[RMDB]
RNA sequence: GGGAACGACUCGAGUAGAGUCGAAAAUUUUCAGCUGAACUGGUGUCCCCUAACCCAGACACCACCUGUUUUAUCUUCUUACCAGUUAACUCUUGAUUUGUUUACUGCUUGAGUUGUGGGAGGAAUCCCUCUGUGCCGACUUCGGUCGGCACAGAGGAAAAGAAACAACAACAACAAC
Reactivity to 2A3 in 0.01 (KOAc 150mM, MgCl2 10mM, bicine 150mM(pH8.5), 24C), signal-to-noise 2, nucleotides 027 to 126: u130u120u090u170c040a020g060c010u090g030a080a000c000u000g000g000u010g080u030c000c000c000c080u190a090a090c000c000c000a000g000a000c000a000c000c030a030c010c000u070g090u000u040u110u190a220u000c010u000u050c010u010u090a200c090c000a050g040u110u090a060a000c000u000c000u190u000g040a070u240u300u140g280u020u230u110a090c090u170g040c000u130u000g000a050g010u040u030g000u000g030g010g000a030g000g060a140a070u040c000
Conditions: 150 mM KOAc, 10 mM MgCl2 and 150 mM bicine (pH 8.5), 24 C. Structure probing data (2A3) for a 177-nucleotide construct. Reactivities are rounded to 0.1 and cut off at 0 and 3.